[RMDB]
RNA sequence: GGGAACGACUCGAGUAGAGUCGAAAAGAUGAGGGCGUAGAGGCAGGAUGAUCAUCCUCAACAACUCGAUGAAUUCAGCUGUAUACCUAACUUGAGGAUUCGGGUCUUCAGAUGGCACAAACAGGAAGAUGGGUAGAAAUAUGGGCACACUGUGGAAGACCGGUAGCAUAUUCGUAUGCUACCGGUCAAAAGAAACAACAACAACAAC
Reactivity to 2A3 in 0.01 (KOAc 150mM, MgCl2 10mM, bicine 150mM(pH8.5), 24C), signal-to-noise 1, nucleotides 027 to 156: g090a050u130g000a060g020g090g010c100g010u110a000g000a000g150g000c050a010g030g050a050u070g020a010u120c050a020u000c030c010u090c010a000a070c010a030a000c000u080c040g020a080u100g040a060a140u110u100c000a030g030c000u030g100u080a040u120a070c000c090u120a130a130c030u020u040g020a020g000g010a000u070u050c000g080g000g000u010c000u010u010c010a030g000a080u070g000g000c020a000c040a060a150a010c000a020g140g000a020a070g090a060u050g050g020g000u010a010g050a010a080a000u110a010u060g010g020g020c030a010c070a040c050u080g050u180g050g030a070a000

This 207-nucleotide RNA was probed chemically with 2A3. Source: RMDB library OK3TST, as collected in RNAgym. The 2A3 profile rests on 643 reads. 2A3 adducts were read by reverse transcription with SuperScript II with manganese.